[RMDB]
This 177-nucleotide RNA was probed chemically with DMS and 2A3.
For 2A3 the reverse transcriptase was SuperScript II with manganese.
The data come from the RNA Mapping Database (RMDB), library M2PK90.
The 2A3 profile rests on 2,296 reads.
DMS adducts were read by reverse transcription with MarathonRT.
For DMS, 5,775 sequencing reads were counted.
RNA sequence: GGGAACGACUCGAGUAGAGUCGAAAAUUAAUCGGGCUUGUUUGCGCCGCGUAUGCGCUUGCUUGCUUGCUUGCGGGCGAACGGGCUUGUUCCCUUUUGGCGCUUGCUUGCGGGCGGCCAAAAUGAACGUAUGCUUAACGUUCGCGUUAAGCAUACGAAAAGAAACAACAACAACAAC
Reactivity to DMS in 0.01 (KOAc 150mM, MgCl2 10mM, bicine 150mM(pH8.5), 24C), signal-to-noise 2, nucleotides 027 to 126: u000u030a060a110u000c010g000g000g020c010u010u010g010u000u000u010g010c010g030c020c010g010c020g010u000a030u000g020c050g010c070u010u000g000c200u010u000g010c010u010u000g020c020u000u000g020c000g000g000g010c010g000a010a010c000g020g000g010c010u000u000g010u000u000c000c010c010u000u000u010u000g000g010c000g010c020u000u000g010c020u010u000g010c040g010g000g000c000g020g000c000c000a040a000a020a050u010g020a080a150
Reactivity to 2A3 in 0.01 (KOAc 150mM, MgCl2 10mM, bicine 150mM(pH8.5), 24C), signal-to-noise 2, nucleotides 027 to 126: u170u100a060a150u050c020g000g000g040c010u020u020g040u100u010u040g010c270g090c020c000g030c010g020u100a070u210g010c030g010c120u110u210g100c060u130u140g020c020u070u120g020c000u050u100g010c000g010g000g010c010g000a010a000c020g020g000g000c040u010u020g000u000u030c020c000c010u000u050u000u000g010g010c010g000c020u020u040g000c010u050u100g020c060g010g000g040c000g070g100c000c000a000a010a000a040u170g020a050a030